[RMDB]
RNA sequence: GGGAACGACUCGAGUAGAGUCGAAAAUACCUUUUCAUCUAAACCUUUGCACGAGUAAUUAAAGAUCCGCUUGACGAGCCUAUAUGGAAGAGCGUGCCAGGUAUUUGACUUAAGGACUGUUAGUAACUCUAUCACAAUGAUUCGUCAUUGUGAUAGAAAAAGAAACAACAACAACAAC
Reactivity to DMS in 0.01 (KOAc 150mM, MgCl2 10mM, bicine 150mM(pH8.5), 24C), signal-to-noise 9, nucleotides 027 to 126: u020a110c010c010u000u000u000u010c020a040u000c010u000a030a030a040c010c010u000u010u020g010c010a020c010g000a050g010u020a100a100u010u020a010a020a030g000a130u010c160c030g020c020u010u000g020a060c020g010a020g000c000c000u000a040u010a020u040g010g000a010a020g010a080g020c000g000u000g010c010c300a010g000g010u010a010u000u000u000g000a020c300u010u010a020a020g000g010a150c150u010g010u010u010a090g010u010a060a090c110
Reactivity to 2A3 in 0.01 (KOAc 150mM, MgCl2 10mM, bicine 150mM(pH8.5), 24C), signal-to-noise 9, nucleotides 027 to 126: u140a020c010c000u040u010u020u040c030a030u000c010u160a080a070a130c010c000u020u030u160g000c000a000c010g040a040g090u190a260a140u120u090a050a020a020g060a140u090c090c020g010c050u130u210g020a020c010g000a010g030c000c010u180a170u030a050u300g040g000a050a040g080a020g300c010g000u000g000c010c020a000g040g000u020a090u000u020u010g010a010c020u070u070a010a000g050g020a030c050u080g030u100u030a050g010u040a040a030c020